[RMDB]
RNA sequence: GGGAACGACUCGAGUAGAGUCGAAAAUUAAUGAGGCUGCGCAGGCGGUCAUGGUGGCCUAUUCCAUGGGAAAUGACCUUGAACAACUGGCAGGUAACUGCAACGUGAAGCGUCUGACGGUAGUCCCUGCAGAUAAUGACGCGGUGCCGCCGGUCGCGUCAUACCCCUCUUUCGAGAGGGGUAUGACAAAAGAAACAACAACAACAAC
Reactivity to 2A3 in 0.01 (KOAc 150mM, MgCl2 10mM, bicine 150mM(pH8.5), 24C), signal-to-noise 1, nucleotides 027 to 156: u060u060a070a100u130g040a030g030g000c060u030g000c150g000c090a080g080g000c010g000g000u050c020a010u020g000g010u010g040g030c000c000u010a030u200u000c050c010a060u060g020g000g100a120a000a000u110g130a100c000c010u030u060g110a020a060c040a020a030c070u080g080g000c000a030g010g030u000a140a000c010u000g000c040a000a160c040g040u070g130a060a000g080c010g020u030c040u020g020a070c020g020g010u070a030g080u070c040c050c080u050g010c000a010g000a040u220a070a070u140g040a030c020g000c000g050g000u000g010c000c000g000c000c000g040g010u090c010g000c030